Source: RMDB library OK2TST, as collected in RNAgym. This 177-nucleotide RNA was probed chemically with DMS. Conditions: 150 mM KOAc, 10 mM MgCl2 and 150 mM bicine (pH 8.5), 24 C.

[RMDB]
RNA sequence: GGGAACGACUCGAGUAGAGUCGAAAAUUGAAGGGUUGAUUACUCAAGAAGACUUGUUUGAAAUUGUUUCAGGAGAAAUCAUAGAUCAACGAAGUGAAAAAGUUCUUUAUACAAUGUCUGGGAAAGAUGGUAGUGGUUAUUUCGAUAACCACUACCAAAAAGAAACAACAACAACAAC
Reactivity to DMS in 0.01 (KOAc 150mM, MgCl2 10mM, bicine 150mM(pH8.5), 24C), signal-to-noise 1, nucleotides 027 to 126: u010u020g010a130a130g000g040g000u010u010g010a080u030u010a070c020u010c060a040a120g010a120a090g000a060c090u000u000g040u020u010u010g000a050a160a170u020u040g050u000u020u000c000a090g000g000a080g010a020a030a110u010c020a050u010a150g000a080u000c070a020a080c120g000a050a050g040u020g000a030a030a130a080a140g000u020u000c020u010u010u000a040u010a160c040a090a060u000g000u020c060u000g000g010g000a060a200a070g010a110